[RMDB]
RNA sequence: GGGAACGACUCGAGUAGAGUCGAAAAGUUUAAUUAUCGUAGAGACGGUCAACCAUUCUACGAGCGGUUUCCCCUCUGCGCUUUUACAAAUCUAGAUAAGUUGAAGUUCAAAGAGGUCUGUAAAACUAAGCGCCGUAGUUCGCUACGGCGAAAAGAAACAACAACAACAAC
Reactivity to DMS in 0.01 (KOAc 150mM, MgCl2 10mM, bicine 150mM(pH8.5), 24C), signal-to-noise 3, nucleotides 027 to 129: g000u050u010u000a030a070u050u040a050u010c020g020u040a030g020a070g050a100c180g000g000u090c200a100a190c110c190a260u130u000c010u000a000c030g030a050g030c150g000g100u010u000u000c040c030c000c100u020c080u060g050c000g040c060u010u060u010u030a020c020a040a050a100u020c030u050a160g010a140u020a100a060g040u030u090g010a090a220g020u000u000c080a110a120a100g000a000g010g000u010c050u000g000u040a000a000a000a000c090u040a110a060g010
Reactivity to 2A3 in 0.01 (KOAc 150mM, MgCl2 10mM, bicine 150mM(pH8.5), 24C), signal-to-noise 3, nucleotides 027 to 129: g030u100u000u000a090a080u060u130a110u110c050g000u000a000g000a010g060a100c080g040g010u020c030a080a170c120c000a060u000u120c000u000a000c040g010a000g030c000g070g000u000u050u050c000c000c000c000u000c000u010g000c020g120c020u040u030u020u020a030c000a060a160a000u100c120u090a000g000a250u070a160a070g010u020u050g230a020a020g080u090u100c070a250a050a020g160a040g010g010u100c050u080g070u100a010a010a010a010c000u030a060a010g000